[RMDB]
RNA sequence: GGGAACGACUCGAGUAGAGUCGAAAAAGAGCUGCCUGUAGUAAUAUAGCUACGACGAUCUGCAAGGCAGUAGAGAGAGGCUAUGACAAAUAUGCAGGCUAUUUCCUAGUUUUCUUAAAAACUCUCCUACUUUUGCAUAUUUCGAUAUGCAAAAGUAAAAAGAAACAACAACAACAAC
Reactivity to DMS in 0.01 (KOAc 150mM, MgCl2 10mM, bicine 150mM(pH8.5), 24C), signal-to-noise 4, nucleotides 027 to 126: a080g020a120g020c150u000g000c000c010u010g020u010a030g020u000a100a120u000a040u000a040g010c010u000a140c070g000a250c090g010a150u000c000u000g010c010a170a130g030g010c050a020g010u020a060g000a100g000a160g000a260g000g000c020u000a010u000g010a100c130a070a090a130u000a040u000g010c010a010g010g010c020u000a030u010u000u000c010c010u000a060g010u000u010u000u000c130u020u000a060a060a010a060a050c030u010c060u000c100c100
Reactivity to 2A3 in 0.01 (KOAc 150mM, MgCl2 10mM, bicine 150mM(pH8.5), 24C), signal-to-noise 4, nucleotides 027 to 126: a000g060a030g060c100u030g000c010c000u010g000u020a030g040u010a040a170u130a030u020a190g030c010u060a060c040g190a030c030g020a090u040c000u000g000c030a130a170g290g000c030a010g000u030a000g030a000g010a010g000a010g030g010c010u030a030u060g040a060c050a020a150a060u240a040u150g010c010a000g010g000c010u000a060u010u050u000c000c010u000a030g000u010u060u020u030c080u130u150a130a160a060a080a070c010u050c010u010c020c030